[RMDB]
RNA sequence: GGGAACGACUCGAGUAGAGUCGAAAACAUCUCUUCGUCUAGUGAGCGAUUCGUGCUGCGUUGGGCUCAUUAUUAUUCGCUUUACGGACGAGCGAGUAACAUCACGGCACGAGGGGAAUCAGGUGGCUCUCGGAGUACCUUUCGAGGUGCUCUGGGGAAAAGAAACAACAACAACAAC
Reactivity to 2A3 in 0.01 (KOAc 150mM, MgCl2 10mM, bicine 150mM(pH8.5), 24C), signal-to-noise 9, nucleotides 027 to 126: c030a050u020c000u000c000u050u030c010g020u000c020u030a070g010u010g040a030g020c030g050a050u040u050c030g010u030g020c030u020g010c010g070u050u050g040g050g000c020u010c060a020u010u120a040u040u020a020u010u010c000g000c000u020u010u090a050c040g040g020a010c010g000a000g000c020g000a000g000u010a020a020c010a040u040c020a000c000g010g000c020a000c010g010a020g000g010g000g010a020a060u060c010a020g000g030u020g030g000c000
Reactivity to DMS in 0.01 (KOAc 150mM, MgCl2 10mM, bicine 150mM(pH8.5), 24C), signal-to-noise 9, nucleotides 027 to 126: c120a110u020c010u000c010u020u000c020g000u010c030u010a060g020u010g000a050g020c020g010a130u030u010c070g020u010g020c040u010g010c050g020u010u010g000g010g000c030u000c060a060u020u020a080u010u010a010u000u000c000g010c000u000u000u020a130c080g010g000a030c060g000a010g000c050g000a020g000u000a020a040c120a070u010c090a090c070g010g000c050a030c030g000a050g000g010g000g000a070a070u010c100a070g000g010u010g000g000c060